The data come from the RNA Mapping Database (RMDB), library OK3TST. Structure probing data (2A3 and DMS) for a 207-nucleotide construct. The DMS profile rests on 6,081 reads. The RNA was probed in 150 mM KOAc, 10 mM MgCl2 and 150 mM bicine (pH 8.5) at 24 C.
RNA sequence: GGGAACGACUCGAGUAGAGUCGAAAAGAGUACAUAUGCCCAGCCUUACUGUUUCGGCUGGAUGCUUCGUGCAAAUGCUAUGUACGCCUACGUAUAUGUGCGUAGAUGCCUAUAUUUUCUCUCCUGAGAAAAUAUAGAUGCAUACAAAGAAGAUGCACCAUUAUCCAUACUUCGGUAUGGAUAAUGGAAAAGAAACAACAACAACAAC
Reactivity to 2A3 in 0.01 (KOAc 150mM, MgCl2 10mM, bicine 150mM(pH8.5), 24C), signal-to-noise 7, nucleotides 027 to 156: g070a030g010u010a000c010a010u040a020u300g010c010c010c010a010g020c000c010u180u130a140c120u140g080u110u060u090c030g000g000c010u020g060g010a030u090g000c010u060u140c130g140u200g030c010a050a060a140u200g000c020u010a000u020g000u000a000c010g010c000c010u020a020c010g050u050a060u020a040u290g190u120g050c000g010u000a020g010a090u050g010c000c010u000a000u000a000u000u000u000u000c010u000c020u060c030c190u200g000a000g000a000a000a000a000u000a000u000a000g010a010u130g000c000a010u040a100c060a040a140a010g110a070a030g040a080u110g040c040a020
Reactivity to DMS in 0.01 (KOAc 150mM, MgCl2 10mM, bicine 150mM(pH8.5), 24C), signal-to-noise 2, nucleotides 027 to 156: g020a060g020u000a020c020a040u000a040u010g000c020c010c020a020g020c000c010u010u010a130c120u000g040u010u000u000c170g020g000c000u000g010g010a130u010g000c040u000u010c130g050u000g030c020a100a090a200u000g030c040u000a040u000g010u000a010c000g010c030c010u000a030c020g040u000a070u000a080u000g020u010g050c010g010u000a040g010a060u000g000c000c030u000a010u000a010u000u000u000u000c010u010c010u000c200c240u000g020a030g000a030a010a030a000u000a010u010a000g010a090u000g020c000a020u000a140c050a050a050a110g000a090a140g010a170u000g020c040a220